Structure probing data (2A3 and DMS) for a 207-nucleotide construct. DMS adducts were read by reverse transcription with MarathonRT.

[RMDB]
RNA sequence: GGGAACGACUCGAGUAGAGUCGAAAAAGGAAACAAGUAGAAGAGGUUUCGGAGUUUUUAAAGCGUAUGGGCCCACAGAGCAAACUGGCACUGCAGUGCAUCAACCUUGAGUCCUGUGAUCUUAAACAGUACAAGAAAUUACUCCAGGAACUAAGUGCCUUAUCUUACUGUUCGCAGUAAGAUAAGGAAAAGAAACAACAACAACAAC
Reactivity to 2A3 in 0.01 (KOAc 150mM, MgCl2 10mM, bicine 150mM(pH8.5), 24C), signal-to-noise 3, nucleotides 027 to 156: a010g150g000a060a100a000c040a080a030g020u050a020g030a110a030g030a030g050g010u020u010u080c050g050g020a020g000u010u010u030u060u110a150a150a010g020c030g010u080a080u130g010g010g040c020c010c000a020c030a020g070a000g000c030a050a110a130c080u080g040g000c020a010c030u080g010c050a020g010u000g060c000a060u060c020a040a050c000c000u030u050g020a010g060u060c000c030u030g020u030g050a060u010c030u060u150a080a120a020c010a040g020u060a030c010a070a040g040a100a100a000u110u050a020c010u000c010c020a020g020g000a000a010c040u030a000a110g030u020g090
Reactivity to DMS in 0.01 (KOAc 150mM, MgCl2 10mM, bicine 150mM(pH8.5), 24C), signal-to-noise 2, nucleotides 027 to 156: a070g020g000a130a090a050c040a050a120g020u000a100g020a060a090g020a220g020g020u000u000u000c040g000g010a070g020u010u010u010u000u020a070a040a150g030c040g030u010a120u000g000g020g080c060c020c030a080c050a050g010a120g000c000a050a080a110c040u000g000g000c060a050c070u000g020c070a120g040u000g030c020a060u000c020a140a040c030c040u000u020g000a190g010u020c030c000u000g000u000g000a070u000c070u000u000a110a100a090c080a130g010u020a080c050a050a150g000a090a050a080u000u000a030c030u000c000c000a080g030g010a040a040c030u020a030a090g000u000g020
2A3 adducts were read by reverse transcription with SuperScript II with manganese.